Structure probing data (DMS and 2A3) for a 177-nucleotide construct. The RNA was probed in 150 mM KOAc, 10 mM MgCl2 and 150 mM bicine (pH 8.5) at 24 C. It was measured as part of the RMDB library OK1LIB. For DMS the reverse transcriptase was MarathonRT. The DMS profile rests on 2,040 reads. Values are in units of 0.01, from 0 to 300, in steps of 10. The 2A3 profile rests on 1,491 reads. For 2A3 the reverse transcriptase was SuperScript II with manganese. Values cover nucleotides 27 to 126.
[RMDB]
RNA sequence: GGGAACGACUCGAGUAGAGUCGAAAAGGACUAAUGAGUCUCUGGAACGCCAGAUGCGUGAAAUGGAAGAGAACUUUGCCGUCGAAGCUGCUAACUACCAAGACACUAUUGGCCGCCUGCAGGAUGACGCCCAGUCAUAUUUCGAUAUGACUGGGCGAAAAGAAACAACAACAACAAC
Reactivity to DMS in 0.01 (KOAc 150mM, MgCl2 10mM, bicine 150mM(pH8.5), 24C), signal-to-noise 2, nucleotides 027 to 126: g040g000a030c040u000a120a140u080g000a090g000u000c000u000c030u000g020g010a040a110c150g000c050c050a130g000a090u060g030c000g030u000g020a040a130a120u050g000g000a100a110g010a120g010a150a080c060u000u000u000g010c110c040g000u000c050g000a070a070g030c000u000g000c030u030a040a070c120u040a020c030c040a030a040g030a100c050a080c040u000a090u010u000g010g000c030c030g000c090c000u000g020c050a050g010g020a030u000g000a130
Reactivity to 2A3 in 0.01 (KOAc 150mM, MgCl2 10mM, bicine 150mM(pH8.5), 24C), signal-to-noise 3, nucleotides 027 to 126: g080g020a020c030u060a010a100u240g140a060g030u000c010u000c000u010g060g090a060a000c010g050c020c100a110g050a130u160g040c100g000u050g100a200a010a000u110g060g050a030a020g040a070g000a090a100c010u080u150u130g000c030c020g000u030c010g010a050a000g020c000u010g000c000u020a000a060c010u020a110c010c000a040a010g020a010c050a020c080u060a080u130u110g010g010c000c000g020c000c020u070g010c020a030g000g090a020u140g030a010